[RMDB]
RNA sequence: GGGAACGACUCGAGUAGAGUCGAAAAACAGGAAUGGCCAUCGGAGCCGUGCUGGAGCGAGAAGAUGCGCGGGACGCCCUCGUUCUGCGGGAGAACUUCAAGGGCCACACGAUAGCCUCGCUUCCAAGAACGUUAAGCUCUUCGGAGCUUAACGUUCAAAAGAAACAACAACAACAAC
Reactivity to 2A3 in 0.01 (KOAc 150mM, MgCl2 10mM, bicine 150mM(pH8.5), 24C), signal-to-noise 1, nucleotides 027 to 126: a000c030a060g070g060a190a180u150g050g000c030c030a100u150c060g120g050a070g000c010c030g060u030g120c040u050g010g030a040g030c080g030a000g020a110a010g040a050u170g050c030g020c010g000g070g030a010c060g000c000c030c040u080c000g020u030u000c000u030g000c080g040g090g020a060g020a030a030c030u100u040c090a100a110g000g030g020c000c010a040c140a020c050g080a080u080a070g030c000c000u020c010g040c080u060u000c000c040a030a060
Reactivity to DMS in 0.01 (KOAc 150mM, MgCl2 10mM, bicine 150mM(pH8.5), 24C), signal-to-noise 1, nucleotides 027 to 126: a060c140a040g020g040a110a100u000g020g000c040c010a300u010c100g050g000a070g060c030c010g050u000g050c160u000g010g000a000g030c030g010a030g000a140a160g020a080u020g000c030g010c010g000g010g020a070c130g060c060c050c130u000c160g000u000u010c000u000g020c090g000g030g000a150g000a030a030c000u010u020c210a060a040g030g000g000c000c030a050c050a090c000g000a050u000a290g000c140c010u000c060g010c080u000u000c000c050a090a040
Source information:
The data come from the RNA Mapping Database (RMDB), library OK2TRN. This 177-nucleotide RNA was probed chemically with 2A3 and DMS. For 2A3 the reverse transcriptase was SuperScript II with manganese. The 2A3 profile rests on 1,058 reads. For DMS, 686 sequencing reads were counted. DMS adducts were read by reverse transcription with MarathonRT. The RNA was probed in 150 mM KOAc, 10 mM MgCl2 and 150 mM bicine (pH 8.5) at 24 C.